[RMDB]
RNA sequence: GGGAACGACUCGAGUAGAGUCGAAAAUCACAGAUAUAAAGAGUUUGCCUUGAGUCUCAGAUGAAACUUUGAAUAUUGGACAUUUGAGUUGAUGCUGGAACAAGUUAAGAGUUUUGAAGACUAUGGGAUAGAAUGACUAUAUUCAACACUGAAAGAAGAUUUACCCUCAUUUCGAUGAGGGUAAAUCAAAAGAAACAACAACAACAAC
Reactivity to 2A3 in 0.01 (KOAc 150mM, MgCl2 10mM, bicine 150mM(pH8.5), 24C), signal-to-noise 2, nucleotides 027 to 156: u100c030a010c000a070g080a010u150a010u070a130a170a030g060a050g080u040u140u110g030c000c000u030u090g030a010g030u020c030u000c100a030g030a090u060g050a090a090a110c010u060u160u090g080a100a030u120a130u050u090g030g030a010c010a020u040u040u020g060a070g000u030u060g050a060u070g010c010u020g050g000a050a020c020a070a020g040u070u060a110a000g030a000g040u040u000u100u110g090a060a000g030a000c010u030a060u060g010g010g000a040u050a110g050a010a040u090g010a010c010u040a020u030a060u250u120c010a010a030c040a040c100u130g060a100a080a050g240a080a010
Reactivity to DMS in 0.01 (KOAc 150mM, MgCl2 10mM, bicine 150mM(pH8.5), 24C), signal-to-noise 2, nucleotides 027 to 156: u010c030a110c050a150g000a080u000a040u000a090a080a180g000a290g030u010u000u000g010c040c040u010u000g030a150g010u000c000u000c020a190g030a110u000g000a090a050a130c020u000u000u030g000a110a080u000a080u010u000g010g010a170c040a030u000u000u010g020a070g000u000u000g000a080u000g060c000u010g010g000a120a120c040a130a060g010u000u010a060a120g000a040g030u020u000u000u010g010a100a090g010a030c040u000a060u000g030g000g010a100u000a040g010a040a100u000g010a080c070u010a110u000a080u000u000c000a010a080c050a090c040u000g000a080a050a120g010a090a190